[RMDB]
RNA sequence: GGGAACGACUCGAGUAGAGUCGAAAACUCAAUGACUUCGGUCAUUGAGAAAGGACAAAAGUCCAACUGAGCAGCUAUGAGCUCAUACAUCCUCAUAGCAAAAAACACACACGUUCGCGUGUGUGAACCUAGUUCUAUUGUUCGCAAUAGAACUAGGAAAAGAAACAACAACAACAAC
Reactivity to 2A3 in 0.01 (KOAc 150mM, MgCl2 10mM, bicine 150mM(pH8.5), 24C), signal-to-noise 7, nucleotides 027 to 126: c000u000c000a000a000u000g000a000c010u020u030c200g110g000u010c000a000u000u000g000a000g010a050a040a010g010g000a020c040a070a300a070a060g010u010c010c000a020a030c060u040g010a000g020c040a010g000c020u000a000u010g000a000g000c000u010c020a040u190a080c050a090u100c010c030u000c000a000u000a000g000c000a040a020a000a010a030a040c030a000c010a000c000a000c000g020u040u050c260g010c000g060u010g000u010g000u000g000a000a000
Reactivity to DMS in 0.01 (KOAc 150mM, MgCl2 10mM, bicine 150mM(pH8.5), 24C), signal-to-noise 6, nucleotides 027 to 126: c010u000c010a000a010u000g010a010c000u000u010c180g020g020u000c000a010u000u000g000a010g000a030a050a100g010g000a010c010a060a120a110a160g010u000c000c010a110a160c220u000g000a010g010c050a130g000c000u000a010u000g010a010g000c010u000c000a060u010a070c230a060u010c150c090u010c000a000u010a010g030c010a000a020a060a050a060a100c000a000c000a000c010a000c000g010u000u010c220g020c010g020u000g010u000g000u000g000a040a080
An RNA of 177 nucleotides, treated with 2A3 and DMS and read out base by base. 2A3 adducts were read by reverse transcription with SuperScript II with manganese. The DMS profile rests on 8,099 reads. It was measured as part of the RMDB library M2PK50. Values are in units of 0.01, from 0 to 300, in steps of 10.